[RMDB]
RNA sequence: GGGAACGACUCGAGUAGAGUCGAAAAACGAAAACUACGCACUCGCAGCUUAAUAACCUGCGCUGAGCCCUUCUCCCCCUGCUUGCCUGUGUCCUAGGGAAUUGGAAGGUCAUCCUUCACAGGAUCGUCUAGGUAAUCCCUUUCGAGGGAUUACCAACUUUCAACAGGGAUUCGUCCCUGUUGAAAGAAAAGAAACAACAACAACAAC
Reactivity to DMS in 0.01 (KOAc 150mM, MgCl2 10mM, bicine 150mM(pH8.5), 24C), signal-to-noise 1, nucleotides 027 to 156: a180c060g020a110a040a070a070c020u010a040c050g020c020a090c130u020c010g060c050a060g010c040u000u000a120a180u040a150a150c270c000u000g010c000g000c150u030g000a100g010c050c030c070u000u000c010u000c010c010c010c010c010u010g000c070u010u010g070c010c000u000g000u010g020u000c050c050u000a120g050g010g030a090a100u000u000g010g000a050a060g020g010u000c090a080u000c030c010u010u010c090a100c140a100g040g000a070u010c020g070u010c020u030a070g030g030u000a040a000u000c000c000c000u000u000u000c290g040a050g000g000g020a030u010u010a040c000c000a020a030
Reactivity to 2A3 in 0.01 (KOAc 150mM, MgCl2 10mM, bicine 150mM(pH8.5), 24C), signal-to-noise 1, nucleotides 027 to 156: a000c030g010a000a010a030a020c170u170a010c070g030c020a080c030u010c030g030c000a000g000c020u020u040a020a010u030a010a080c000c000u010g060c040g110c210u080g000a040g020c020c000c000u140u070c050u080c000c020c000c040c000u010g030c080u070u030g010c000c000u070g030u050g010u070c010c080u040a040g030g010g000a030a040u140u050g050g030a090a060g050g000u090c020a080u070c020c000u070u040c030a020c000a030g070g000a040u100c040g110u000c060u080a090g010g000u010a000a000u000c000c000c000u020u000u050c110g030a000g000g000g000a000u000u000a000c000c000a000a000

The data come from the RNA Mapping Database (RMDB), library M2RFPK. Structure probing data (DMS and 2A3) for a 207-nucleotide construct. For DMS, 1,797 sequencing reads were counted. Values cover nucleotides 27 to 156. For DMS the reverse transcriptase was MarathonRT. The reactions ran in a buffer of 150 mM KOAc, 10 mM MgCl2 and 150 mM bicine (pH 8.5), at 24 C.